[RMDB]
RNA sequence: GGGAACGACUCGAGUAGAGUCGAAAAUCCUCUCUGUGCUCCAACAGUUACACUUAGAGGCUAAUAGUAGGGCCUGGGCUUUCUGUGUUAAAUGCCAUAAUGAUAUAUUGGCAGCAACAGACCCCAGAUGGCACGUGCUUCGGCACGUGCAAAAGAAACAACAACAACAAC
Reactivity to DMS in 0.01 (KOAc 150mM, MgCl2 10mM, bicine 150mM(pH8.5), 24C), signal-to-noise 4, nucleotides 027 to 129: u000c030c000u000c000u010c050u010g020u010g030c110u000c100c070a160a180c180a150g010u150u040a140c060a050c070u040u090a060g040a000g030g020c180u030a140a040u040a060g060u000a030g020g060g000c140c010u030g000g000g000c000u040u080u020c000u070g010u020g010u090u060a020a100a070u020g040c030c010a030u040a020a110u040g060a140u060a150u000a090u020u080g040g010c040a060g000c150a000a030c030a030g000a050c300c010c010c020a070g040a100u070g000
Reactivity to 2A3 in 0.01 (KOAc 150mM, MgCl2 10mM, bicine 150mM(pH8.5), 24C), signal-to-noise 4, nucleotides 027 to 129: u010c000c000u000c000u000c010u000g000u020g020c020u020c090c010a060a040c020a170g040u040u100a180c040a050c000u030u080a040g000a020g140g010c020u080a060a110u070a180g090u000a010g010g000g000c000c000u010g010g020g000c000u000u160u000c010u000g030u000g040u060u130a080a150a030u040g010c000c000a000u060a170a110u170g170a000u090a030u030a060u210u030g000g000c000a000g000c010a020a010c010a000g000a030c060c000c000c000a020g010a080u080g070